The record gives the reactivity of an RNA of 177 nucleotides to 2A3 and DMS. As a SHAPE reagent, 2A3 marks flexible, mostly unpaired nucleotides at the ribose 2'-OH. Values cover nucleotides 27 to 126.
[RMDB]
RNA sequence: GGGAACGACUCGAGUAGAGUCGAAAACUUUGCAAAGAUUAACAUUUGAAUAAGGCUAUUAAAGCACAGUGCAUAUAUAGACUGCAAAUUUUGUCGGUUCAUAGUGGAAGUGGUUCAUAAUGGUUUAGAUUAUCAGCAGGUUCGCCUGCUGAUAAUCAAAAGAAACAACAACAACAAC
Reactivity to 2A3 in 0.01 (KOAc 150mM, MgCl2 10mM, bicine 150mM(pH8.5), 24C), signal-to-noise 1, nucleotides 027 to 126: c010u130u050u160g030c010a100a050a110g080a140u200u200a180a110c050a090u170u140u200g040a060a150u090a070a060g030g000c010u020a050u100u220a300a080a020g000c000a020c040a070g120u080g050c030a030u050a010u000a010u000a100g040a050c040u010g010c040a040a060a140u120u160u040u070g100u040c040g010g050u100u070c020a070u020a160g040u070g010g000a060a000g000u040g090g000u000u000c010a030u280a050a060u300g080g000u040u000u120a010
Reactivity to DMS in 0.01 (KOAc 150mM, MgCl2 10mM, bicine 150mM(pH8.5), 24C), signal-to-noise 2, nucleotides 027 to 126: c040u000u000u000g030c060a030a090a100g010a150u000u010a110a110c050a060u000u000u010g010a100a090u020a090a130g010g000c030u000a050u000u000a050a100a140g020c030a110c110a100g020u010g000c030a030u000a070u000a050u000a050g020a080c070u010g000c040a020a030a110u000u000u000u000g020u010c020g000g000u010u000c050a040u010a050g010u000g010g000a060a040g000u000g010g010u010u010c030a060u000a030a080u010g020g020u000u010u010a120